This 207-nucleotide RNA was probed chemically with 2A3. The reactions ran in a buffer of 150 mM KOAc, 10 mM MgCl2 and 150 mM bicine (pH 8.5), at 24 C.
RNA sequence: GGGAACGACUCGAGUAGAGUCGAAAAUUGCGCUUGCCUAUUUAGGCAUACUUCUCAGGAUGGCGCGUUGCAGUCCAACAAGAUCCAGGGACUGUACAGAAUUUUCCUAUACAUCGAGUCGGGUUUGAAAACGUUAGGCACUUCGGUGCCUAACGAACGUGUUAUGGAACUUCGGUUCCAUAACACGAAAAGAAACAACAACAACAAC
Reactivity to 2A3 in 0.01 (KOAc 150mM, MgCl2 10mM, bicine 150mM(pH8.5), 24C), signal-to-noise 3, nucleotides 027 to 156: u030u060g000c000g040c020u040u100g000c000c000u130a260u190u240u300a070g020g010c020a000u110a090c040u090u110c120u060c140a050g120g030a170u180g030g030c000g000c020g000u020u090g000c000a000g000u010c000c010a040a090c040a190a160g120a180u130c120c090a060g000g010g000a000c000u000g020u040a020c010a040g140a020a000u010u010u010u000c000c010u000a010u000a020c020a300u010c000g000a000g000u030c040g030g060g000u100u060u140g070a050a040a000a000c020g000u000u000a000g000g000c000a010c010u040u040c240g090g000u010g000c000c000u000a000a000c000g000a000a000